[RMDB]
RNA sequence: GGGAACGACUCGAGUAGAGUCGAAAAUUUUUAGUGAGAAUGCUCUAUAUAAAAUAUUAUGUCACAUAAGAUUUGGUUAUUAGUGCUCGUCUCCACGUUAAUUCCAUUAAUACCAUAAUUAACAAAAGCUAGGCAGCGAGUUCGCUCGUUGUCUAGCAAAAGAAACAACAACAACAAC
Reactivity to DMS in 0.01 (KOAc 150mM, MgCl2 10mM, bicine 150mM(pH8.5), 24C), signal-to-noise 4, nucleotides 027 to 126: u000u030u070u040u020a100g020u020g010a100g010a110a100u010g000c020u000c050u010a060u000a110u030a120a030a020a070u010a050u010u000a030u010g000u050c080a070c020a060u000a050a030g000a070u010u000u010g020g030u010u010a060u010u020a050g020u000g000c020u000c090g020u000c020u000c000c030a040c040g010u020u000a040a040u000u010c060c020a030u000u010a040a050u010a050c020c020a040u020a040a050u030u000a050a070c080a090a080a100a160
Reactivity to 2A3 in 0.01 (KOAc 150mM, MgCl2 10mM, bicine 150mM(pH8.5), 24C), signal-to-noise 7, nucleotides 027 to 126: u130u100u050u060u080a060g000u020g030a060g030a140a080u080g000c000u000c010u040a070u040a040u090a240a040a060a060u160a070u130u040a060u150g150u210c050a040c020a170u080a050a050g060a100u040u050u120g090g030u120u100a080u060u080a070g030u020g040c040u020c060g060u010c020u000c030c030a020c020g020u030u070a050a050u110u000c020c040a020u050u100a040a020u060a060c020c010a040u060a190a090u140u070a110a100c050a050a090a010a000